[RMDB]
This 177-nucleotide RNA was probed chemically with 2A3. Values cover nucleotides 27 to 126. 2A3 adducts were read by reverse transcription with SuperScript II with manganese.
RNA sequence: GGGAACGACUCGAGUAGAGUCGAAAACAAGCACUCUCCGAAGGUUUACCUGAGCGUAUUCAUCGUGUUGAGCAGGCGAUGUGUAGCUUUACGGAACUGUCACCGGGUUCAAGACGAUCGGGUGCUGCCAGGCCUACGACUUCGGUCGUAGGCCUGGAAAAGAAACAACAACAACAAC
Reactivity to 2A3 in 0.01 (KOAc 150mM, MgCl2 10mM, bicine 150mM(pH8.5), 24C), signal-to-noise 2, nucleotides 027 to 126: c000a000a050g010c000a010c000u020c000u030c060c020g060a090a050g130g070u000u000u130a070c010c010u080g040a020g040c050g040u060a000u030u060c040a030u000c000g000u070g050u100u150g030a090g010c050a010g030g000c040g000a000u000g130u040g050u170a000g050c010u040u080u300a110c130g020g040a060a020c010u070g000u060c000a000c090c000g050g070g070u060u060c000a000a000g110a070c050g020a010u060c100g010g010g000u010g000c000u090g020